[RMDB]
Description:
Structure probing data (DMS and 2A3) for a 177-nucleotide construct. 2A3 is a SHAPE reagent: it acylates the 2'-hydroxyl of flexible nucleotides of all four kinds. For 2A3, 1,375 sequencing reads were counted. The DMS profile rests on 1,289 reads. The RNA was probed in 150 mM KOAc, 10 mM MgCl2 and 150 mM bicine (pH 8.5) at 24 C. DMS adducts were read by reverse transcription with MarathonRT. 2A3 adducts were read by reverse transcription with SuperScript II with manganese.
RNA sequence: GGGAACGACUCGAGUAGAGUCGAAAACUGUGGUUACACACCUGACCCUGCAGCCAUGCAAAGAAAAAAGAACGGCGGAGAGAGCGCAAGAGCGGUCUCAGGAGCCCCGGGGCAACUCAGACCGAGCCUAGUACUAUCAGUUCGCUGAUAGUACUAGAAAAGAAACAACAACAACAAC
Reactivity to DMS in 0.01 (KOAc 150mM, MgCl2 10mM, bicine 150mM(pH8.5), 24C), signal-to-noise 2, nucleotides 027 to 126: c180u010g000u010g000g000u000u010a120c060a070c060a030c040c070u000g000a090c040c010c040u000g010c040a090g040c070c070a060u000g030c110a020a070a110g030a000a060a080a070a100a080g000a140a080c090g010g020c030g010g010a120g020a040g000a050g010c040g030c110a040a100g000a090g000c010g020g010u000c010u000c160a060g020g010a300g020c040c020c050c150g030g000g000g000c030a030a160c010u010c100a010g000a040c000c000g000a100g010c100
Reactivity to 2A3 in 0.01 (KOAc 150mM, MgCl2 10mM, bicine 150mM(pH8.5), 24C), signal-to-noise 1, nucleotides 027 to 126: c030u040g000u070g110g000u150u200a070c090a000c000a000c070c010u020g100a100c010c000c010u000g000c000a020g010c020c020a070u090g000c030a110a160a060g120a060a200a010a020a010a000g070a050a020c060g030g000c040g030g020a040g010a010g050a050g010c000g000c050a070a040g060a050g160c030g000g000u000c020u000c000a010g000g070a020g010c030c000c020c080g180g020g020g020c000a000a030c010u000c030a020g030a030c020c010g010a000g000c020